This 207-nucleotide RNA was probed chemically with 2A3.
The reactions ran in a buffer of 150 mM KOAc, 10 mM MgCl2 and 150 mM bicine (pH 8.5), at 24 C.
Reactivities are given for positions 27 through 156.
2A3 adducts were read by reverse transcription with SuperScript II with manganese.
For 2A3, 568 sequencing reads were counted.
RNA sequence: GGGAACGACUCGAGUAGAGUCGAAAACAAAAAGCGGAUGUACUGAACCCAGAGUGGGUCAUUAAGGCCGAGUUCACUCCGAACCUGUGCAACUUGCUGUGCGGAGGCGCGCUGACCGACAAUAAUUCGCGCUGGGUCACCAGGAGCAAGUUGGAGACCGGUGAUAAUGUUUCGACAUUAUCACCGGAAAAGAAACAACAACAACAAC
Reactivity to 2A3 in 0.01 (KOAc 150mM, MgCl2 10mM, bicine 150mM(pH8.5), 24C), signal-to-noise 1, nucleotides 027 to 156: c010a000a110a030a070a020g090c050g030g080a090u130g070u140a000c010u010g000a090a000c030c000c010a020g050a000g090u090g030g000g020u000c000a000u020u280a130a120g040g000c010c010g010a030g040u080u050c050a040c090u000c010c010g040a100a090c020c080u160g110u200g000c020a020a100c030u080u060g000c030u060g020u060g050c060g020g080a020g000g000c030g010c020g070c070u060g040a070c040c000g090a050c070a050a150u300a080a060u100u090c020g020c000g000c030u010g000g010g030u040c000a010c080c010a010g000g030a040g000c010a040a000g020u030u000g010g020a020g060a090